The record gives the reactivity of an RNA of 207 nucleotides to 2A3 and DMS. Source: RMDB library OK3TST, as collected in RNAgym. The reactions ran in a buffer of 150 mM KOAc, 10 mM MgCl2 and 150 mM bicine (pH 8.5), at 24 C. Reactivities are rounded to 0.1 and cut off at 0 and 3.
RNA sequence: GGGAACGACUCGAGUAGAGUCGAAAAUUAACCUGAAGAAUGAUGAGAGCAAAGAAGCUAAUAAUUUACGUGAUGUGUUCAGAGCCUUAAAACUAAUCUCAAUCUAACAUUCAGUUUUGGCCUCUUUGGCAGCAAAUACAAUAACAAUAAAAAAUAACGUAAAUACGAGGUUCGCCUCGUAUUUACGAAAAGAAACAACAACAACAAC
Reactivity to 2A3 in 0.01 (KOAc 150mM, MgCl2 10mM, bicine 150mM(pH8.5), 24C), signal-to-noise 4, nucleotides 027 to 156: u060u020a030a050c020c010u050g070a050a060g040a090a120u090g050a030u060g030a040g000a010g050c040a060a040a070g020a050a000g060c040u030a050a050u180a120a110u170u150u110a060c060g040u030g050a030u080g020u000g040u080u080c070a030g000a020g050c030c050u110u100a090a100a030a020c020u040a030a110u050c050u000c100a080a130u050c020u080a060a050c010a050u030u050c030a030g050u020u010u020u030g040g010c040c020u010c000u050u040u080g080g000c010a010g040c000a020a070a100u160a090c050a030a050u150a130a070c050a070a060u260a230a100a090a030a000a070u260a080a020
Reactivity to DMS in 0.01 (KOAc 150mM, MgCl2 10mM, bicine 150mM(pH8.5), 24C), signal-to-noise 1, nucleotides 027 to 156: u010u000a070a170c030c000u020g030a100a140g000a170a100u010g040a150u000g020a110g040a270g030c020a090a030a080g010a050a030g000c020u020a050a040u020a110a030u000u000u000a090c090g020u000g020a050u000g000u000g000u000u010c130a060g000a110g030c060c060u000u000a060a070a090a070c090u030a060a040u000c000u020c080a080a070u000c090u010a040a080c090a070u010u000c060a070g010u000u000u000u000g030g000c050c000u010c120u000u020u000g020g000c050a000g000c030a020a040a060u010a080c090a090a030u020a050a090c030a070a130u100a050a040a080a090a080a040u000a120a160